[RMDB]
RNA sequence: GGGAACGACUCGAGUAGAGUCGAAAAGAAAACAAGUACCGAGAACAUUGUUUUCGCUGCUUGGCGUUGCCGUUUUGUGUUGCAGUUGGUUGGGUAACGCCGCAAAUACCAACGGGACAGAAAGAUACAUACCCUACCGGUUCGCCGGUAGGGUAUGAAAAGAAACAACAACAACAAC
Reactivity to DMS in 0.01 (KOAc 150mM, MgCl2 10mM, bicine 150mM(pH8.5), 24C), signal-to-noise 2, nucleotides 027 to 126: g000a020a030a110a090c000a020a030g040u000a060c150c020g000a020g000a030a000c000a190u030u050g030u000u000u000u000c000g000c160u000g000c000u010u020g000g000c030g000u000u000g000c020c010g020u010u010u010u040g010u000g040u030u000g050c050a100g000u000u000g000g020u010u030g000g000g020u000a030a110c220g000c000c000g000c080a030a070a140u040a060c020c000a020a050c010g000g030g000a020c070a030g000a090a050a100g020a110u020a080
Reactivity to 2A3 in 0.01 (KOAc 150mM, MgCl2 10mM, bicine 150mM(pH8.5), 24C), signal-to-noise 2, nucleotides 027 to 126: g050a000a010a000a000c030a010a010g010u040a070c050c090g010a040g050a110a000c240a300u100u190g000u030u010u010u020c010g000c020u010g030c000u110u090g000g000c000g020u020u000g000c000c010g040u000u050u150u080g140u050g100u080u020g090c040a070g020u050u050g080g020u020u060g050g030g000u010a010a010c000g030c010c000g000c000a040a080a010u190a020c000c000a040a000c000g000g060g000a000c010a060g170a010a100a000g080a020u120a050

Structure probing data (DMS and 2A3) for a 177-nucleotide construct. For DMS, 3,800 sequencing reads were counted. For 2A3 the reverse transcriptase was SuperScript II with manganese.